[RMDB]
RNA sequence: GGGAACGACUCGAGUAGAGUCGAAAAGCCGAGGCUAGAGUCACAUCCUGACAUGGUGCUUGUCCUGGUGUGCUACAGUUCUCGGAGAGAAUCGCUGGUCUUGAUUCAUUGGUAGGGGCCUUCAGUGCCAUGGCCUCAUUUUCGAAUGAGGCCAUGGAAAAGAAACAACAACAACAAC
Reactivity to DMS in 0.01 (KOAc 150mM, MgCl2 10mM, bicine 150mM(pH8.5), 24C), signal-to-noise 2, nucleotides 027 to 126: g000c000c000g020a040g010g000c000u000a030g000a030g010u030c000a000c000a020u000c000c060u020g000a010c000a010u020g010g050u020g000c070u010u010g010u000c000c040u010g000g030u020g000u010g000c010u000a070c070a020g000u000u040c000u000c000g000g010a050g010a050g000a100a060u010c060g010c050u000g010g000u010c040u000u010g010a070u010u010c100a160u020u030g000g010u030a170g030g010g010g020c030c030u000u000c030a060g000u040g000
Reactivity to 2A3 in 0.01 (KOAc 150mM, MgCl2 10mM, bicine 150mM(pH8.5), 24C), signal-to-noise 6, nucleotides 027 to 126: g030c010c000g000a000g000g000c010u060a050g010a040g220u270c030a010c000a010u010c000c020u010g000a000c000a020u150g060g110u260g160c140u040u040g000u000c000c030u010g000g010u010g000u010g010c000u030a060c010a010g010u140u220c010u000c000g030g000a000g000a000g000a040a060u100c030g030c070u060g000g040u020c020u030u120g050a100u140u040c090a080u090u200g060g010u070a050g000g000g010g000c010c000u040u040c070a060g050u030g090

Structure probing data (DMS and 2A3) for a 177-nucleotide construct. It was measured as part of the RMDB libraries RFM100 and RFMREP. The RNA was probed in 150 mM KOAc, 10 mM MgCl2 and 150 mM bicine (pH 8.5) at 24 C.